[RMDB]
RNA sequence: GGGAACGACUCGAGUAGAGUCGAAAACGGGGUCGGUGAAAGUCCGAACCGGCGGUUACAGUCCGCGACCCGGUCGCCUCCAGCGACCGGUUGACCAGGUGCAAUUCCUGGACCGACGGUUAAAGUCAAAAUCAUCCAACGUUCGCGUUGGAUGAAAUCGUAAACUUAUCUUCGGAUAAGUUUACGAAAAAGAAACAACAACAACAAC
Reactivity to DMS in 0.01 (KOAc 150mM, MgCl2 10mM, bicine 150mM(pH8.5), 24C), signal-to-noise 1, nucleotides 027 to 156: c000g010g010g030g050u000c010g000g070u000g000a070a140a300g030u010c010c000g000a060a090c080c010g060g000c000g010g000u000u000a170c150a080g020u000c010c040g000c000g020a110c300c020c000g030g000u010c000g020c000c000u000c150c090a160g030c000g000a040c000c000g000g020u000u010g000a040c000c020a000g000g010u010g030c170a300a220u000u000c000c000u020g000g010a010c000c010g030a060c030g020g020u000u000a050a080a190g000u000c070a070a090a100a210u000c020a070u000c000c000a000a000c000g080u000u000c290g020c050g040u000u000g010g000a010u000g000a000a030a080